Description:
An RNA of 207 nucleotides, treated with DMS and 2A3 and read out base by base. The DMS profile rests on 7,294 reads. Values are in units of 0.01, from 0 to 300, in steps of 10. The RNA was probed in 150 mM KOAc, 10 mM MgCl2 and 150 mM bicine (pH 8.5) at 24 C.
RNA sequence: GGGAACGACUCGAGUAGAGUCGAAAACAACACGUCCUCGUCGUACAGAGUGGUAACAUGUGUCACCACAUAUCCAAGCUUGGUUACACGGGCUUGACCCAACCCCUUGGGCGGAUGGUGGCACAUGAAAAGAAGUAACACUUCGGUGUUACUUCAAGUCCCUAUUUUAGUUCGCUAAAAUAGGGACAAAAGAAACAACAACAACAAC
Reactivity to DMS in 0.01 (KOAc 150mM, MgCl2 10mM, bicine 150mM(pH8.5), 24C), signal-to-noise 3, nucleotides 027 to 156: c110a100a080c120a110c040g020u000c030c020u000c060g000u000c040g030u020a150c060a070g010a190g040u030g020g010u000a080a210c030a040u000g030u000g010u000c000a020c000c010a020c050a110u000a100u000c060c000a030a050g020c060u000u010g030g000u040u000a150c110a130c170g020g000g020c010u000u010g010a110c020c030c020a070a060c300c050c120c040u000u030g010g020g020c040g020g000a060u000g000g030u000g010g000c030a020c020a000u000g010a070a060a090a160g000a000a010g010u000a000a010c000a020c010u000u010c250g030g030u000g010u000u000a000c000u010u000c000a040a100
Reactivity to 2A3 in 0.01 (KOAc 150mM, MgCl2 10mM, bicine 150mM(pH8.5), 24C), signal-to-noise 8, nucleotides 027 to 156: c050a020a000c030a020c070g120u070c010c040u060c040g140u040c030g060u170a080c070a090g070a030g040u100g040g110u150a090a030c000a000u000g000u000g000u000c000a000c020c000a010c020a070u160a050u070c010c000a010a010g010c060u150u150g020g020u080u140a080c120a090c160g010g000g000c030u180u300g130a300c000c000c000a000a030c010c000c000c000u010u010g010g000g000c040g080g000a150u020g010g000u000g000g000c010a000c000a000u000g000a000a000a000a010g000a000a000g000u000a000a000c000a000c000u030u100c220g070g000u010g000u000u000a000c000u000u000c000a000a010